[RMDB]
RNA sequence: GGGAACGACUCGAGUAGAGUCGAAAAUUCUUCGUAUAAUAGGUGAGUUAUUAAGCCAUCCCAACUUAAUAACUUACAACAUUAGUAGGUGACCAAACAUUUACUAAUAUGACUGUAGUUUUCCUUGCACAGGAUGUGAUUUCGAUCACAUCCUGUGAAAAGAAACAACAACAACAAC
Reactivity to DMS in 0.01 (KOAc 150mM, MgCl2 10mM, bicine 150mM(pH8.5), 24C), signal-to-noise 1, nucleotides 027 to 126: u000u010c050u000u060c100g040u100a150u030a080a140u010a060g010g030u000g000a000g020u000u000a000u000u000a000a000g000c080c040a090u000c000c010c000a190a300c000u000u000a010a000u000a000a020c010u000u000a000c060a100a060c130a020u000u000a030g000u010a000g020g000u000g000a080c100c300a210a130a220c010a000u000u020u000a010c000u000a000a030u000a120u000g000a080c130u000g000u010a030g000u020u000u000u000c010c010u000u000g000
Reactivity to 2A3 in 0.01 (KOAc 150mM, MgCl2 10mM, bicine 150mM(pH8.5), 24C), signal-to-noise 2, nucleotides 027 to 126: u040u000c000u060u100c010g160u150a170u120a300a120u170a130g050g030u010g000a000g000u020u020a000u000u000a000a000g000c000c010a100u070c000c000c000a000a000c010u000u000a000a000u010a010a000c000u010u000a000c000a110a000c000a010u000u010a000g020u000a010g020g000u000g000a120c090c000a150a030a050c010a010u000u010u000a040c000u010a000a000u040a070u190g130a160c070u160g030u070a090g050u010u010u080u010c010c000u010u060g000
Structure probing data (DMS and 2A3) for a 177-nucleotide construct. 2A3 adducts were read by reverse transcription with SuperScript II with manganese. Source: RMDB libraries RFM100 and RFMREP, as collected in RNAgym. For DMS the reverse transcriptase was MarathonRT.